[RMDB]
RNA sequence: GGGAACGACUCGAGUAGAGUCGAAAAAGGUGAUUUCUCCUACACCUUUAUCAAUGGAGGAACUCGACUUUGCUGUGGGUCCCAAAGGGACCUUAGGUGCAGACAGUUACCGGCGGUGAAGUGUGAGCAUAGGUUCGUGUCUUCGGACACGAACCAACAAUUGAACUACGUUCGCGUAGUUCAAUUGAAAAGAAACAACAACAACAAC
Reactivity to 2A3 in 0.01 (KOAc 150mM, MgCl2 10mM, bicine 150mM(pH8.5), 24C), signal-to-noise 2, nucleotides 027 to 156: a000g000g000u010g000a020u010u060u020c000u010c000c000u120a140c000a010c010c000u120u240u100a030u010c060a030a040u300g000g000a000g000g010a030a030c000u000c010g020a010c010u020u010u020g000c000u010g010u090g020g000g000u000c000c000c020a140a150a110g000g000g000a000c000c000u020u060a020g000g000u010g000c010a030g110a300c030a030g040u040u120a020c000c000g030g010c020g000g000u000g030a010a030g020u090g080u100g090a010g010c060a080u110a180g000g000u000u000c000g000u000g000u000c000u000u080c200g070g000a000c000a000c000g000a000a000c000c000a000a000
Reactivity to DMS in 0.01 (KOAc 150mM, MgCl2 10mM, bicine 150mM(pH8.5), 24C), signal-to-noise 2, nucleotides 027 to 156: a040g010g030u000g010a200u000u000u000c070u000c010c010u020a120c030a040c000c000u000u000u000a080u000c260a070a090u000g050g010a090g030g000a080a080c030u000c020g020a030c050u000u000u000g020c020u020g000u000g030g030g040u000c000c010c010a080a140a140g030g010g030a010c010c010u000u000a000g030g000u000g020c080a160g020a110c130a120g000u000u000a050c000c000g000g020c040g010g020u010g020a020a030g060u000g000u010g000a060g040c040a080u010a100g010g010u000u000c010g040u000g000u000c010u000u000c300g060g000a030c000a010c010g010a000a010c010c000a030a060
This 207-nucleotide RNA was probed chemically with 2A3 and DMS. 2A3 is a SHAPE reagent: it acylates the 2'-hydroxyl of flexible nucleotides of all four kinds. The DMS profile rests on 5,452 reads. 2A3 adducts were read by reverse transcription with SuperScript II with manganese.